[RMDB]
Chemical mapping of a 177-nucleotide RNA with 2A3 and DMS.
RNA sequence: GGGAACGACUCGAGUAGAGUCGAAAACUCUGCUAAUUCGUUAGCAGAGGUACACUGGGACGGGUCGGGAGGGGGAUACUCGCGGUCCCAAGAUGAAUCCAGCAAGCACAUUAUUCGUAAUGUGCAAAUCACAAUAAAACUUCGGUUUUAUUGUGAUAAAAGAAACAACAACAACAAC
Reactivity to 2A3 in 0.01 (KOAc 150mM, MgCl2 10mM, bicine 150mM(pH8.5), 24C), signal-to-noise 6, nucleotides 027 to 126: c000u000c000u000g000c000u010a020a020u070u070c180g060u060u010a000g000c000a000g000a000g000g010u020a030c070a020c040u040g030g030g130a030c050g020g000g210u240c070g030g030g080a270g070g040g000g010g010a020u050a080c010u010c020g030c020g010g010u010c000c010c000a000a010g030a050u130g040a040a060u000c020c000a020g060c070a190a040g000c000a010c000a000u000u020a020u060u070c120g050u020a000a000u000g000u000g010c000a020a000
Reactivity to DMS in 0.01 (KOAc 150mM, MgCl2 10mM, bicine 150mM(pH8.5), 24C), signal-to-noise 5, nucleotides 027 to 126: c000u000c000u000g010c000u000a010a010u000u010c190g010u000u000a010g010c000a010g000a010g010g010u000a040c120a130c050u000g010g000g000a100c140g010g010g000u020c070g010g000g010a120g010g010g020g010g010a060u000a020c040u000c030g010c050g010g000u000c000c000c020a030a050g010a080u000g000a090a080u010c030c040a110g010c160a090a150g000c000a010c000a020u000u000a030u000u010c170g010u000a010a000u000g010u000g000c000a020a020
The RNA was probed in 150 mM KOAc, 10 mM MgCl2 and 150 mM bicine (pH 8.5) at 24 C.